[RMDB]
RNA sequence: GGGAACGACUCGAGUAGAGUCGAAAAUUCGGCUACAUAGGAAUAGUAUGAGCUAUGCUAUCCAUUGGAUUCCUAGGAUUUAUUGUGUGAGCCCACCACAUAUUUACAGUAGGCAUAGACGUAGACAUCUCCGUAAGCAGUUCGCUGCUUACGGAGAAAAAGAAACAACAACAACAAC
Reactivity to DMS in 0.01 (KOAc 150mM, MgCl2 10mM, bicine 150mM(pH8.5), 24C), signal-to-noise 1, nucleotides 027 to 126: u000u000c080g010g010c030u000a040c090a090u010a120g000g000a050a060u020a040g000u000a040u010g010a150g020c080u000a020u000g010c050u000a060u000c010c010a180u010u000g010g020a130u000u000c010c020u000a060g030g020a050u010u010u000a030u010u000g030u000g020u000g010a100g010c000c000c000a080c180c060a020c020a000u000a020u020u000u000a060c120a100g010u000a090g000g000c020a010u000a040g030a040c030g000u000a070g000a110c090a100
Reactivity to 2A3 in 0.01 (KOAc 150mM, MgCl2 10mM, bicine 150mM(pH8.5), 24C), signal-to-noise 1, nucleotides 027 to 126: u080u020c030g080g000c050u120a020c030a040u000a070g020g040a080a060u010a030g060u060a080u080g070a010g150c040u030a000u040g030c010u020a030u080c050c010a060u120u100g040g070a070u120u100c010c000u060a050g080g000a030u020u150u070a110u290u060g010u030g000u000g050a030g040c000c000c000a000c020c000a050c010a010u080a090u030u090u070a010c020a100g080u100a080g020g000c000a010u060a050g030a080c050g000u010a030g020a050c000a010